An RNA of 177 nucleotides, treated with DMS and read out base by base. The RNA was probed in 150 mM KOAc, 10 mM MgCl2 and 150 mM bicine (pH 8.5) at 24 C. For DMS the reverse transcriptase was MarathonRT.
[RMDB]
RNA sequence: GGGAACGACUCGAGUAGAGUCGAAAAGAUAUGGAAAGCGGCCGCAUGCCAUGGGAGAAUGCAAACUUUCGGAAACGAAAGGACGUAUAUUCGAGGAUCAUGGCAUGCGGCCCGCUUUCCUAAGUCACAUUGUCAACUAGUUCGCUAGUUGACAAUGAAAAGAAACAACAACAACAAC
Reactivity to DMS in 0.01 (KOAc 150mM, MgCl2 10mM, bicine 150mM(pH8.5), 24C), signal-to-noise 4, nucleotides 027 to 126: g010a040u000a300u010g000g010a010a000a020g010c030g030g000c020c000g040c020a010u000g000c010c000a010u000g000g010g010a030g020a040a010u000g030c070a120a300a300c010u000u000u000c000g010g010a070a120a280c010g010a000a000a000g000g000a200c300g010u000a080u010a080u000u000c000g010a090g040g010a040u010c010a010u000g000g000c000a020u000g010c000g000g000c070c010c020g000c010u010u000u000c000c000u000a000a090g000u000c060a300